Chemical mapping of a 177-nucleotide RNA with 2A3 and DMS. Source: RMDB library RFM100, as collected in RNAgym. DMS (dimethyl sulfate) methylates the pairing face of unpaired adenines and cytosines. Reactivities are rounded to 0.1 and cut off at 0 and 3.

RNA sequence: GGGAACGACUCGAGUAGAGUCGAAAAGGAGGAAGCCGAUAGCAAAACACUGGCCUGAUGAACAAGAAGCAGAUACUAGGCUUAUUCGAUGGGUAAAAGGUCUCAAAUACUCAAAGCCCUAAUACACGCCAUAUACCCGAUUCGUCGGGUAUAUGGCAAAAGAAACAACAACAACAAC
Reactivity to 2A3 in 0.01 (KOAc 150mM, MgCl2 10mM, bicine 150mM(pH8.5), 24C), signal-to-noise 2, nucleotides 027 to 126: g030g020a030g000g040a060a000g010c000c000g080a200u080a000g110c080a130a000a140a040c120a070c030u060g050g000c070c010u050g020a090u110g030a090a080c080a060a020g110a090a020g060c010a000g000a020u080a020c040u050a020g000g110c000u000u010a070u060u050c030g040a100u110g000g020g000u010a000a150a000a000g020g050u000c000u020c040a080a150a010u100a050c000u030c000a080a100a000g010c000c000c000u030a060a040u050a070c020a020c060
Reactivity to DMS in 0.01 (KOAc 150mM, MgCl2 10mM, bicine 150mM(pH8.5), 24C), signal-to-noise 1, nucleotides 027 to 126: g010g000a040g000g000a080a010g080c030c030g030a110u000a140g000c050a040a030a090a100c050a100c070u020g030g000c060c010u000g000a130u000g000a060a110c180a050a020g010a000a010g000c040a070g020a110u000a040c090u030a010g000g000c040u000u000a110u000u000c060g010a000u000g010g000g050u060a020a030a050a010g000g030u000c050u010c060a010a000a140u000a050c060u000c130a080a060a100g010c000c000c050u040a030a040u000a110c190a080c300